[RMDB]
The record gives the reactivity of an RNA of 177 nucleotides to DMS and 2A3. For 2A3, 6,658 sequencing reads were counted. Source: RMDB library TTRDEL, as collected in RNAgym. For 2A3 the reverse transcriptase was SuperScript II with manganese. For DMS, 6,845 sequencing reads were counted. Reactivities are given for positions 27 through 126.

RNA sequence: GGGAACGACUCGAGUAGAGUCGAAAAGAUAUGGAUCCGUGUAAGGGAGUCGAGUCGGAAACGACCGACUUUGAUCUUACCGGAUCCUAAGUCAAAAGACUAGCGACAGUUCGCUGUCGCUAGUCAAUCAGUAAGAUAGCUUCGGCUAUCUUACUGAAAAAGAAACAACAACAACAAC
Reactivity to DMS in 0.01 (KOAc 150mM, MgCl2 10mM, bicine 150mM(pH8.5), 24C), signal-to-noise 3, nucleotides 027 to 126: g000a000u000a080u010g010g000a000u000c010c000g000u010g000u000a010a000g030g000g010a020g000u000c000g000a150g020u000c000g010g000a020a020a050c010g010a010c010c010g000a010c000u000u000u000g000a070u010c000u000u000a000c010c010g010g000a000u000c000c000u000a000a040g000u010c010a110a090a140a120g010a010c000u010a010g000c000g000a020c000a020g010u000u020c250g030c010u000g010u000c000g010c000u010a000g000u000c000a020a030
Reactivity to 2A3 in 0.01 (KOAc 150mM, MgCl2 10mM, bicine 150mM(pH8.5), 24C), signal-to-noise 3, nucleotides 027 to 126: g000a010u010a010u050g000g010a000u020c010c070g010u030g000u210a050a090g290g300g060a010g010u010c010g020a100g050u010c000g010g000a010a030a000c010g010a010c000c010g010a000c030u020u010u120g040a020u040c010u000u010a000c010c000g000g010a000u010c000c000u000a000a000g000u000c000a000a000a040a210g000a010c010u010a010g000c000g010a000c000a010g040u080u090c190g110c180u010g000u000c010g000c010u000a000g000u000c000a000a000